[RMDB]
RNA sequence: GGGAACGACUCGAGUAGAGUCGAAAAGGAUCCUUCGUAGUCAGGAAGGUAACUGCCUCGUGUACAGUUACCAGUGACUAGACCUAAUGUCAUCGUACACGAGGAUGACAUCGUCCAUUAAGGAUCGCUACAUGUGAGUAUUCGUACUUACAUGUAGAAAAGAAACAACAACAACAAC
Reactivity to DMS in 0.01 (KOAc 150mM, MgCl2 10mM, bicine 150mM(pH8.5), 24C), signal-to-noise 9, nucleotides 027 to 126: g010g000a010u000c000c000u000u000c180g020u000a030g010u000c020a090g010g010a160a130g010g010u000a010a030c020u000g010c080c020u000c170g010u010g020u000a180c000a040g000u000u000a020c050c030a140g010u000g000a010c000u000a070g000a060c060c140u010a110a040u000g000u000c000a010u000c020g010u010a050c150a080c190g000a050g000g000a010u000g000a020c040a010u000c240g000u000c020c130a120u000u000a030a020g010g000a010u000c010g000
Reactivity to 2A3 in 0.01 (KOAc 150mM, MgCl2 10mM, bicine 150mM(pH8.5), 24C), signal-to-noise 9, nucleotides 027 to 126: g030g000a010u000c010c000u020u050c080g100u050a030g020u020c030a020g090g230a210a070g040g000u010a010a010c020u040g030c010c020u090c090g100u110g030u070a060c010a020g000u020u030a030c010c020a030g040u010g010a000c000u010a040g050a050c000c020u090a040a010u040g010u000c000a010u020c030g110u150a030c110a040c120g090a050g110g000a000u010g000a000c000a020u020c030g040u000c030c020a030u100u080a020a000g000g000a000u000c010g000